[RMDB]
RNA sequence: GGGAACGACUCGAGUAGAGUCGAAAAGUCCAUUCGUGGACAGUAAAGAUAUGGAUGAUUGGAUGGCUACGUCGAAGAACUUGAUUCGGAAACGAAUCAAGGGAGACGUAGAACUACCAUCGAAUCAUCCUAAGUCGAUUGUCACCUUCGGGUGAAAUGUCAAGAAGAUUUUCGAAUCUUCUUGACAAAAAGAAACAACAACAACAAC
Reactivity to DMS in 0.01 (KOAc 150mM, MgCl2 10mM, bicine 150mM(pH8.5), 24C), signal-to-noise 3, nucleotides 027 to 156: g010u000c000c000a080u000u000c290g080u000g000g010a020c010a210g020u000a060a090a120g010a030u000a020u010g000g000a010u000g000a030u000u000g000g010a020u000g000g010c000u000a000c000g000u000c000g020a120a160g000a100a280c000u010u010g000a030u010u000c000g000g020a020a010a040c010g000a020a010u000c010a010a010g000g000g000a060g020a020c000g020u000a000g000a040a010c040u010a300c020c000a010u000c030g000a010a010u000c010a020u000c000c000u000a000a070g000u000c000g000a140u000u010g030u000c010a010c010c000u000u010c300g050g000g020u010g000a000a040a130
Reactivity to 2A3 in 0.01 (KOAc 150mM, MgCl2 10mM, bicine 150mM(pH8.5), 24C), signal-to-noise 7, nucleotides 027 to 156: g010u010c010c000a030u060u130c250g130u070g000g010a010c030a010g060u180a030a200a020g000a010u010a000u040g000g000a000u010g010a010u020u030g180g000a000u000g000g000c000u000a000c000g000u000c010g200a300a030g000a020a000c000u010u000g000a000u000u000c000g000g000a000a000a000c000g000a000a000u000c000a000a000g010g000g000a020g000a000c000g000u000a000g000a000a000c010u140a060c000c000a000u000c020g020a000a000u000c000a000u000c000c000u000a000a000g000u000c000g010a070u050u300g110u020c000a010c000c000u020u050c240g120g000g000u040g010a050a030a070
Structure probing data (DMS and 2A3) for a 207-nucleotide construct. For DMS the reverse transcriptase was MarathonRT. Reactivities are rounded to 0.1 and cut off at 0 and 3. The 2A3 profile rests on 10,328 reads. The reactions ran in a buffer of 150 mM KOAc, 10 mM MgCl2 and 150 mM bicine (pH 8.5), at 24 C. It was measured as part of the RMDB library RNAMAK.